Conditions: 150 mM KOAc, 10 mM MgCl2 and 150 mM bicine (pH 8.5), 24 C. Chemical mapping of a 177-nucleotide RNA with DMS and 2A3. The DMS profile rests on 47,935 reads. For 2A3, 41,689 sequencing reads were counted.
RNA sequence: GGGAACGACUCGAGUAGAGUCGAAAAAACUGCAGCGGCUCGCCCGUCAGCGGAUGCGCGAGGCGCAGCCGAUGCGCGUGCAGGAACAUCCGCUUGAUCGACGGCACCGCGUUCGCGCGCGCAAGCAUAUCCAUACUAAUUUCGAUUAGUAUGGAUAAAAAGAAACAACAACAACAAC
Reactivity to DMS in 0.01 (KOAc 150mM, MgCl2 10mM, bicine 150mM(pH8.5), 24C), signal-to-noise 9, nucleotides 027 to 126: a070a060c100u000g010c040a160g010c010g010g000c070u000c080g010c030c040c030g010u000c050a100g010c010g010g000a030u000g010c100g010c040g010a130g010g010c010g010c130a020g010c120c100g000a090u000g010c000g010c010g020u000g020c020a110g020g010a090a080c020a050u000c010c010g000c020u000u000g010a080u010c090g010a090c050g010g010c130a110c080c050g010c060g010u000u000c060g000c030g010c050g000c030g010c080a060a120g010c100a180
Reactivity to 2A3 in 0.01 (KOAc 150mM, MgCl2 10mM, bicine 150mM(pH8.5), 24C), signal-to-noise 9, nucleotides 027 to 126: a000a000c070u070g000c010a030g010c000g040g000c040u080c090g010c020c030c000g030u020c030a020g010c010g080g040a080u150g030c040g000c020g070a120g090g000c020g000c010a010g030c050c070g080a070u030g000c000g000c010g030u050g010c020a060g050g090a040a020c010a020u010c010c000g030c000u040u140g080a130u160c080g070a080c030g030g000c040a030c070c040g030c020g020u030u030c030g000c000g000c000g000c010g000c040a030a010g020c010a050